[RMDB]
RNA sequence: GGGAACGACUCGAGUAGAGUCGAAAAAAGGUCAAACCAAAUCAAGCUGGCGUGGAUUCCCCCACCUGAGGGAUGAAGCGCGAGAUCUAAUUCAGGUUAGCCAUUCGUUAGCGUGUCGGUUCGCAGGCGGUGGUGAAAUUAAAGAUCGACUAAGCAUUCUCUAGUUAACCUUCGGGUUAACUAGAGAAAAAGAAACAACAACAACAAC
Reactivity to 2A3 in 0.01 (KOAc 150mM, MgCl2 10mM, bicine 150mM(pH8.5), 24C), signal-to-noise 1, nucleotides 027 to 156: a000a000g130g050u140c130a120a010a060c010c000a110a120a110u070c090a060a070g070c010u090g150g000c010g000u000g020g000a030u010u010c020c000c030c000c000a060c020c060u070g010a090g020g000g000a000u000g000a020a000g000c000g000c010g000a000g010a000u130c120u130a080a060u110u010c010a000g010g000u000u030a010g000c000c020a070u220u300c120g020u130u150a070g010c000g000u000g000u010c000g030g010u000u020c000g000c020a020g030g000c020g000g000u000g000g030u020g020a000a070a090u170u300a110a140a000g010a010u020c000g010a020c020u060a180a000g040c020a050u040
The record gives the reactivity of an RNA of 207 nucleotides to 2A3. For 2A3, 568 sequencing reads were counted. The data come from the RNA Mapping Database (RMDB), library ARCHII. The reactions ran in a buffer of 150 mM KOAc, 10 mM MgCl2 and 150 mM bicine (pH 8.5), at 24 C.